RNA sequence: GGGAACGACUCGAGUAGAGUCGAAAAUUGAGAGAAGGUGGGUGAUGAUAUAUGACAUGUAGAUAUGACUAUCAUUCUCUUUUGACGACUGAGGAAGGGGAGGUGAGUCGUCCUACUUCACAAAGAACUAUUAGCGCCUAUUCGUAGGCGCUAAUAGAAAAGAAACAACAACAACAAC
Reactivity to 2A3 in 0.01 (KOAc 150mM, MgCl2 10mM, bicine 150mM(pH8.5), 24C), signal-to-noise 2, nucleotides 027 to 126: u030u010g020a010g000a000g040a140a040g060g080u100g010g080g010u100g030a040u020g000a010u030a010u020a030u110g160a070c070a100u120g050u090a020g050a120u080a040u120g070a030c020u020a020u030c010a090u090u020c020u000c000u020u040u010u040g010a010c030g000a000c030u050g000a020g050g020a060a120g050g010g020g050a060g030g020u090g040a000g010u020c010g010u010c020c000u020a030c000u100u130c050a040c050a100a080a060g080a160a030
Reactivity to DMS in 0.01 (KOAc 150mM, MgCl2 10mM, bicine 150mM(pH8.5), 24C), signal-to-noise 3, nucleotides 027 to 126: u000u000g000a040g020a050g000a090a080g000g020u000g010g030g010u000g030a060u020g010a080u000a060u010a070u000g010a160c150a220u010g020u000a040g010a100u010a040u000g010a060c070u000a050u000c020a080u000u000c010u000c010u000u010u000u000g010a300c020g000a020c050u000g040a150g000g010a070a070g000g000g010g010a090g000g000u000g020a020g010u000c000g010u000c020c060u000a040c160u020u010c180a030c200a060a120a210g000a060a160
The data come from the RNA Mapping Database (RMDB), library OK2TST. The record gives the reactivity of an RNA of 177 nucleotides to 2A3 and DMS. The reactions ran in a buffer of 150 mM KOAc, 10 mM MgCl2 and 150 mM bicine (pH 8.5), at 24 C.